[RMDB]
This 177-nucleotide RNA was probed chemically with DMS and 2A3.
It was measured as part of the RMDB library OK1LIB.
RNA sequence: GGGAACGACUCGAGUAGAGUCGAAAAAAGUAUGAUGCAACAUGGGCUGAUUUACCUACUAAAUUUGAGGCGGGUACUCCAUUAAUUGCUCAAGCAAUUGGGCUUGCAGAAGCUAUUCGCUAUUUAGAACAGGUAGGCAUUUCGAUGCCUACCUGUUAAAAGAAACAACAACAACAAC
Reactivity to DMS in 0.01 (KOAc 150mM, MgCl2 10mM, bicine 150mM(pH8.5), 24C), signal-to-noise 2, nucleotides 027 to 126: a090a070g030u020a010u030g000a050u000g000c020a050a020c060a140u020g000g000g000c060u000g000a050u010u000u020a040c050c010u000a100c040u040a040a010a050u030u050u070g020a090g050g000c000g010g000g000u020a030c060u000c030c050a080u030u000a080a100u030u020g030c020u020c020a040a060g000c150a030a070u000u000g020g010g000c010u020u000g020c250a130g030a040a030g000c150u000a020u020u000c030g000c010u000a130u000u000u000a050g000
Reactivity to 2A3 in 0.01 (KOAc 150mM, MgCl2 10mM, bicine 150mM(pH8.5), 24C), signal-to-noise 2, nucleotides 027 to 126: a000a000g210u200a090u110g060a030u120g000c000a020a030c070a270u110g020g130g000c010u050g120a030u100u020u060a070c000c030u000a000c010u090a180a190a280u040u200u300g020a020g000g030c010g010g000g010u020a020c000u000c050c000a010u090u100a120a060u150u150g000c000u000c050a000a030g010c000a000a030u060u000g000g060g030c000u090u020g000c090a000g040a140a020g050c030u040a030u000u040c050g020c000u030a020u230u070u000a140g000
The reactions ran in a buffer of 150 mM KOAc, 10 mM MgCl2 and 150 mM bicine (pH 8.5), at 24 C.